Conditions: 150 mM KOAc, 10 mM MgCl2 and 150 mM bicine (pH 8.5), 24 C. The record gives the reactivity of an RNA of 170 nucleotides to 2A3 and DMS. The DMS profile rests on 5,943 reads.
[RMDB]
RNA sequence: GGGAACGACUCGAGUAGAGUCGAAAAUGCUCAUAAACAUGACAUACAAAUUACUAAUGAGAGCUACAAUAAUUAUGUACCCUCAUAUGUUAAACCUGAUAGUGUGUCUACCAGCGAUUUAGGUAGUUAAUCCUUGCCUUCGGGCAAGGAAAAAGAAACAACAACAACAAC
Reactivity to 2A3 in 0.01 (KOAc 150mM, MgCl2 10mM, bicine 150mM(pH8.5), 24C), signal-to-noise 3, nucleotides 027 to 129: u070g000c010u060c010a030u160a050a160a060c050a090u020g030a000c000a010u040a030c060a000a130a020u130u000a070c000u180a000a020u000g000a000g000a040g000c030u010a020c000a000a080u230a080a100u160u180a120u080g030u000a020c020c040c000u000c000a000u020a060u080g040u050u070a090a020a010c010c000u000g050a100u000a120g040u030g000u020g010u040c010u000a040c010c000a000g010c030g050a070u000u060u000a060g000g010u000a000g000u010u100a000a000
Reactivity to DMS in 0.01 (KOAc 150mM, MgCl2 10mM, bicine 150mM(pH8.5), 24C), signal-to-noise 2, nucleotides 027 to 129: u040g040c000u050c040a120u080a100a020a190c000a140u040g000a020c000a050u050a000c060a060a090a120u030u000a080c050u030a210a000u000g020a050g010a050g000c290u100a000c030a070a130u050a070a110u050u080a020u010g020u140a070c090c030c050u020c050a030u000a020u050g000u040u060a020a100a100c080c050u060g000a080u010a100g020u030g050u050g000u000c010u030a060c000c000a110g030c140g050a080u000u000u000a020g040g000u000a010g030u000u110a050a070